Source information
The data come from the RNA Mapping Database (RMDB), library OK2TST. This 177-nucleotide RNA was probed chemically with 2A3.

[RMDB]
RNA sequence: GGGAACGACUCGAGUAGAGUCGAAAAGAGUCUCGAACCCUAUUUUGCAGGGUGUGUGUGAGCGGCGUAAUUACGCCGUCGCAAACGCGAGACGACUACGAGCGAACAACACACACACUCGCGUCGAGGUGGGGAGGGGAUUCGUCCCCUCCCCACCAAAAGAAACAACAACAACAAC
Reactivity to 2A3 in 0.01 (KOAc 150mM, MgCl2 10mM, bicine 150mM(pH8.5), 24C), signal-to-noise 1, nucleotides 027 to 126: g010a000g030u030c000u010c000g070a170a120c000c000c000u000a120u070u180u080u300g040c150a120g000g090g000u000g020u000g000u000g000u000g020a010g010c050g000g070c000g010u060a180a240u190u080a020c020g000c000c010g000u000c000g010c020a120a080a000c110g010c010g020a010g000a050c010g010a020c000u090a080c030g070a050g000c000g010a130a000c110a110a000c000a080c010a000c000a010c000a000c090u000c000g010c020g130u050c020g070a030

The reactions ran in a buffer of 150 mM KOAc, 10 mM MgCl2 and 150 mM bicine (pH 8.5), at 24 C.